Structure probing data (2A3 and DMS) for a 207-nucleotide construct.
The DMS profile rests on 2,810 reads.
For 2A3 the reverse transcriptase was SuperScript II with manganese.
DMS adducts were read by reverse transcription with MarathonRT.
The reactions ran in a buffer of 150 mM KOAc, 10 mM MgCl2 and 150 mM bicine (pH 8.5), at 24 C.

RNA sequence: GGGAACGACUCGAGUAGAGUCGAAAAUCUGCUCAUGAGACAGCUGUGCUUGCUUCUUUCCACAUAGGUACAUUGUCCGAGAAGUCAUAUGGUAAUUAGAGUGCUCAUUGAGCUAUUCUAAUCAUAGCUCAUGUUUACUGACACUCUAGGUGGCAAACUAGCACCCUAUGUUCGCAUAGGGUGCUAGAAAAGAAACAACAACAACAAC
Reactivity to 2A3 in 0.01 (KOAc 150mM, MgCl2 10mM, bicine 150mM(pH8.5), 24C), signal-to-noise 2, nucleotides 027 to 156: u000c020u040g000c000u020c030a080u120g050a010g020a150c040a020g010c080u040g020u060g040c040u080u010g020c030u130u100c010u130u050u100c070c060a100c000a130u090a030g030g000u000a020c010a090u010u070g040u010c040c010g070a030g010a170a020g060u060c070a090u090a060u200g070g000u060a070a020u050u030a020g010a000g000u030g000c060u040c040a140u020u060g000a000g000c000u000a020u070u060c080u140a100a100u090c060a030u000a000g000c000u000c000a010u040g040u020u130u050a130c120u060g030a030c000a000c000u020c010u000a020g020g000u010g030g030c010a040a050a030
Reactivity to DMS in 0.01 (KOAc 150mM, MgCl2 10mM, bicine 150mM(pH8.5), 24C), signal-to-noise 1, nucleotides 027 to 156: u020c010u000g000c020u010c050a150u020g020a130g000a090c080a070g000c020u000g060u000g010c040u000u020g000c040u000u000c020u000u010u000c010c070a030c060a110u000a040g000g000u000a050c030a080u000u020g020u000c050c040g030a180g030a080a150g000u000c030a040u000a120u000g020g010u000a050a170u030u000a020g000a030g020u000g000c010u000c050a130u000u010g000a040g000c000u000a000u000u000c060u010a090a160u000c220a030u000a030g030c000u000c010a010u000g000u010u000u010a180c150u010g010a050c010a010c010u000c000u010a000g040g000u000g030g020c110a050a080a200